Structure probing data (DMS and 2A3) for a 177-nucleotide construct. The RNA was probed in 150 mM KOAc, 10 mM MgCl2 and 150 mM bicine (pH 8.5) at 24 C. Reactivities are given for positions 27 through 126. The DMS profile rests on 28,429 reads. 2A3 adducts were read by reverse transcription with SuperScript II with manganese. It was measured as part of the RMDB library M2PK50. The 2A3 profile rests on 34,460 reads. DMS adducts were read by reverse transcription with MarathonRT.

RNA sequence: GGGAACGACUCGAGUAGAGUCGAAAACCGUAUCGGUUCGCCGAUACGGAAAAGAUAAUGCUGCUAACACACAUCUUAAGCAUGGCGGUGGUAUCGCUGGUGGGACUCCCCAGUUCGCUGGGGAGAAACAUACCAGUAGGUUCGCCUACUGGUAUGUAAAAGAAACAACAACAACAAC
Reactivity to DMS in 0.01 (KOAc 150mM, MgCl2 10mM, bicine 150mM(pH8.5), 24C), signal-to-noise 9, nucleotides 027 to 126: c000c000g010u000a000u000c000g000g010u000u010c210g030c000c000g010a010u000a000c000g000g010a010a020a060a090g010a070u000a060a060u000g010c030u000g010c060u000a070a090c120a090c110a070c100a070u000c080u000u010a090a100g010c070a050u000g000g010c050g000g010u000g000g010u000a050u000c040g010c050u000g000g010u000g010g000g000a300c000u000c000c000c000c000a010g010u000u010c170g010c010u010g000g000g000g010a000g000a010a050
Reactivity to 2A3 in 0.01 (KOAc 150mM, MgCl2 10mM, bicine 150mM(pH8.5), 24C), signal-to-noise 9, nucleotides 027 to 126: c000c000g000u000a000u000c010g010g050u050u060c210g040c080c000g000a000u000a000c000g000g000a040a100a000a000g050a030u140a090a050u110g020c030u010g010c030u090a150a010c040a000c010a010c000a190u060c050u140u130a090a030g030c050a060u070g030g000c030g000g030u050g020g070u050a020u080c020g000c040u040g010g050u070g020g010g040a040c000u000c000c000c000c000a000g010u030u050c180g010c070u000g000g000g000g000a010g000a010a010